[RMDB]
RNA sequence: GGGAACGACUCGAGUAGAGUCGAAAAACUUAUGCGGUAGGUCGUGAAUACGCCCGGAGUACAUCCUCAAUGGAACUAGAGGACCCCUCCGGUCGUAUCCAACCUCUGUUUCGGCAGAGGAUACCGUACUCCAUAGCUGUAAGGCUAUGGGCCCGAGGUCAAUUAAGCAGUUCGCUGCUUAAUUGACAAAAGAAACAACAACAACAAC
Reactivity to 2A3 in 0.01 (KOAc 150mM, MgCl2 10mM, bicine 150mM(pH8.5), 24C), signal-to-noise 4, nucleotides 027 to 156: a000c060u150u100a060u140g010c010g010g010u020a010g040g110u180c080g080u090g170a100a030u000a000c000g010c000c010c000g010g000a000g010u080a080c030a130u050c010c000u030c030a070a140u200g220g030a210a150c120u090a160g000a010g000g010a020c070c020c000c000u000c010c000g000g000u000c000g000u000a000u010c010c000a000a030c000c000u000c000u000g040u010u050u090c170g130g000c000a000g000a000g000g000a010u000a000c010c010g010u010a040c000u000c000c000a000u000a000g000c010u050g070u270a120a110g060g010c000u000a000u000g000g000g000c000c030c020g060a070g140